[RMDB]
RNA sequence: GGGAACGACUCGAGUAGAGUCGAAAAAACGCGACCUGCUGGUCGUCUCGCGGGUCGGCGACGAGGGGAUCGACCUCCCCACUGCGGACCUGGCGAUCGUCGCCUCCGGGCUGGGUGGCUCGAGACGGGAUAGGUUUUAUUUCGAUAAAACCUAUCCAAAAGAAACAACAACAACAAC
Reactivity to DMS in 0.01 (KOAc 150mM, MgCl2 10mM, bicine 150mM(pH8.5), 24C), signal-to-noise 6, nucleotides 027 to 126: a070a070c190g020c000g000a040c010c010u020g020c100u030g010g000u000c020g010u010c040u000c020g020c020g010g020g000u000c030g000g020c010g000a100c140g010a140g020g000g000g000a050u020c200g010a130c210c120u000c010c000c000c010a070c080u020g010c010g030g000a050c040c030u010g000g020c020g000a100u020c070g020u010c040g000c020c010u010c060c030g010g000g010c040u010g000g010g020u020g000g000c020u000c020g000a110g010a110c120g020
Reactivity to 2A3 in 0.01 (KOAc 150mM, MgCl2 10mM, bicine 150mM(pH8.5), 24C), signal-to-noise 9, nucleotides 027 to 126: a000a000c110g010c010g010a020c000c010u100g060c100u130g090g020u040c020g030u000c020u020c040g010c010g000g010g010u040c050g080g010c010g010a060c060g040a140g000g030g000g010a030u150c110g110a150c010c010u020c000c000c000c000a040c060u100g010c030g060g010a040c000c020u020g150g020c020g020a040u060c030g050u030c020g030c010c010u000c030c020g030g020g000c030u070g030g080g130u160g040g000c010u010c020g070a090g010a030c070g040